RNA sequence: GGGAACGACUCGAGUAGAGUCGAAAAGGUGGUACAGGAAUAAGGGCUGGGCAAGACCGGUGCCAGCCGCCGCGGUAAUACCGGCAGCCCGAGUGAUGACCGCUAUUAUUGGGCCUAAAGCGUCCGUUCUAGCAUUAUCAUUCGUGAUAAUGCUAGAAAAAGAAACAACAACAACAAC
Reactivity to DMS in 0.01 (KOAc 150mM, MgCl2 10mM, bicine 150mM(pH8.5), 24C), signal-to-noise 7, nucleotides 027 to 126: g000g010u000g010g020u010a060c030a050g000g060a160a060u010a040a220g000g010g010c010u000g010g000g010c120a070a110g000a280c030c000g010g020u020g010c060c060a110g030c050c080g020c090c080g030c060g010g000u000a090a150u010a250c010c010g000g000c010a040g000c010c000c000g000a240g010u000g000a130u000g000a060c020c000g010c020u010a070u020u030a070u010u030g010g000g000c000c020u010a070a110a130g030c190g010u000c010c010g020u010
Reactivity to 2A3 in 0.01 (KOAc 150mM, MgCl2 10mM, bicine 150mM(pH8.5), 24C), signal-to-noise 7, nucleotides 027 to 126: g040g010u030g000g010u120a200c030a020g110g180a080a000u080a060a050g030g000g000c000u020g020g040g050c070a080a020g040a050c000c000g010g010u030g040c050c030a030g010c010c020g020c020c020g050c040g010g010u080a070a030u060a190c020c000g020g000c010a010g000c000c000c000g020a010g020u060g040a080u040g010a010c000c010g000c030u030a040u120u030a100u070u130g020g010g000c020c000u110a180a100a030g050c090g020u000c000c000g000u000